[RMDB]
RNA sequence: GGGAACGACUCGAGUAGAGUCGAAAAGCGGGUGAUAACCUUUUUGCUGUAGCUGUCGGCCAACUGGCGCGCCUGUGACGCCAGGUAGGCGGCGUUACAGAUAUUGGGCGGCAUGUUGCCGAGAUCUCAACUUUCGAAUUUUCGAAUUCGAAAGUUGAAAAGAAACAACAACAACAAC
Reactivity to 2A3 in 0.01 (KOAc 150mM, MgCl2 10mM, bicine 150mM(pH8.5), 24C), signal-to-noise 9, nucleotides 027 to 126: g070c050g010g030g030u090g090a140u170a220a200c040c000u040u040u030u100u210g060c020u010g010u020a010g000c140u180g040u040c010g140g070c030c000a050a030c020u000g030g000c010g000c010g070c030c060u160g070u140g060a050c000g000c000c010a010g010g040u080a080g020g010c000g000g000c000g000u000u000a000c000a000g010a010u090a060u070u060g040g030g010c020g000g010c050a040u120g060u070u090g030c010c000g020a030g010a080u010c000u000
Reactivity to DMS in 0.01 (KOAc 150mM, MgCl2 10mM, bicine 150mM(pH8.5), 24C), signal-to-noise 2, nucleotides 027 to 126: g060c050g010g000g030u000g000a110u020a070a120c060c000u000u000u000u020u020g000c000u000g010u010a030g000c000u030g050u030c000g000g080c040c030a110a230c030u000g010g000c000g030c080g000c270c050u050g050u000g000a200c000g010c000c000a020g030g020u020a120g030g000c010g030g010c000g000u030u000a000c000a000g000a080u040a020u000u010g000g020g010c100g010g000c000a060u010g040u000u010g030c000c020g030a090g020a080u000c040u000